The record gives the reactivity of an RNA of 207 nucleotides to 2A3.
[RMDB]
RNA sequence: GGGAACGACUCGAGUAGAGUCGAAAAGCUAAGGCUUCGGCCUUAGCAAAAAAGAUAUGGAACAUGUGGGGGAGGUCGUUCUUUCGGAAACGAAAGACGACCUUUGAUCCGUAACAUCAUGUUCCUAAGUCAAAAAACGUGGAGUUCGCUCCACGAACUCGUAGAUGUGGUUCGCCACAUCUACGAGAAAAGAAACAACAACAACAAC
Reactivity to 2A3 in 0.01 (KOAc 150mM, MgCl2 10mM, bicine 150mM(pH8.5), 24C), signal-to-noise 1, nucleotides 027 to 156: g010c000u000a010a000g040g000c000u040u200c300g070g000c000c000u000u030a020g000c010a000a000a000a000a000a150g060a050u080a050u100g000g000a000a000c000a010u020g010u060g040g020g000g000g000a010g000g000u010c010g040u180u100c000u010u000u000c010g000g000a070a020a090c000g000a000a000a000g000a000c010g000a000c000c000u000u010u010g000a000u000c000c000g020u030a010a030c050a130u240c010a000u020g000u010u030c000c000u000a060a020g070u100c090a020a020a030a030a030a100c020g000u000g000g020a010g000u100u150c180g090c040u070c010c000a040c010g020a000a010
Source information: Values are in units of 0.01, from 0 to 300, in steps of 10. The reactions ran in a buffer of 150 mM KOAc, 10 mM MgCl2 and 150 mM bicine (pH 8.5), at 24 C.